Chemical mapping of a 207-nucleotide RNA with 2A3. Values are in units of 0.01, from 0 to 300, in steps of 10. For 2A3, 1,168 sequencing reads were counted. Source: RMDB library M2RFPK, as collected in RNAgym.
RNA sequence: GGGAACGACUCGAGUAGAGUCGAAAAAGCUGCUCAGUAUACGUACUGAGCAGCAAGGGGUUGAAGCGGACACCCCUUCAGGCGCGCGCCCAAGCUCCGUACGCCGCCUCAUACGUGGGGCGGCGAAAUAGGUGUAUCUGGUUCGCCAGAUACACAACAGUAAGACUGGGUUCGCCCAGUCUUACUGAAAAGAAACAACAACAACAAC
Reactivity to 2A3 in 0.01 (KOAc 150mM, MgCl2 10mM, bicine 150mM(pH8.5), 24C), signal-to-noise 1, nucleotides 027 to 156: a000g010c000u010g010c000u000c000a000g010u000a040u010a060c160g000u000a020c010u000g000a000g000c000a000g000c000a000a000g030g010g000g000u010u070g230a210a020g040c010g000g000a000c000a000c000c000c000c000u020u150c050a000g010g010c030g040c090g060c040g030c090c020c050a010a000g030c120u030c020c000g000u000a030c010g000c000c000g000c000c000u000c000a070u040a180c300g060u000g000g000g000g020c000g000g000c020g010a000a000a000u100a030g020g040u000g000u000a010u000c000u000g020g000u020u000c020g070c130c010a000g000a010u000a000c000a000c000a000a020